[RMDB]
RNA sequence: GGGAACGACUCGAGUAGAGUCGAAAACUAUCCAGAUCAAUCGUGACGCCAUCCCCACUUCAAGCGCCUGAUAUACGUGCUGGUCCAUCCGCCCUCACUCGCAGGCCAGCUCGAGGAUGGGAGUGAGGACAGCUCGCACCGGACUACAUAGCGGAUGGAUGAAUUAUACGUUCGCGUAUAAUUCAUCAAAAGAAACAACAACAACAAC
Reactivity to DMS in 0.01 (KOAc 150mM, MgCl2 10mM, bicine 150mM(pH8.5), 24C), signal-to-noise 2, nucleotides 027 to 156: c050u000a130u000c020c030a150g010a120u000c090a090a100u010c090g050u000g020a110c040g020c030c020a080u000c010c010c000c010a100c090u000u000c040a040a140g040c030g000c020c010u000g010a120u010a100u000a040c080g020u000g100c050u000g000g000u020c020c010a060u000c020c000g020c000c000c000u000c020a040c010u000c030g030c020a040g020g040c000c020a110g030c100u010c160g000a160g010g000a080u010g000g000g010a020g040u010g030a070g000g020a110c040a120g000c070u000c060g000c060a100c060c010g040g030a130c000u010a080c100a070u010a110g030c010g000g000a060u010g010
Reactivity to 2A3 in 0.01 (KOAc 150mM, MgCl2 10mM, bicine 150mM(pH8.5), 24C), signal-to-noise 5, nucleotides 027 to 156: c040u100a090u080c020c010a040g040a170u110c080a040a080u090c100g060u050g060a020c050g000c020c010a070u040c000c000c020c000a030c020u110u110c070a080a080g040c040g030c060c020u060g050a050u040a020u030a170c050g020u030g000c020u040g020g000u010c010c000a020u000c020c010g010c020c000c010u010c000a030c000u000c010g190c060a050g220g020c040c000a040g020c040u090c070g060a030g030g000a000u020g050g060g010a010g000u020g000a000g010g000a010c010a010g020c010u060c030g040c020a090c060c030g100g010a030c020u060a070c080a090u120a030g020c010g000g000a000u020g010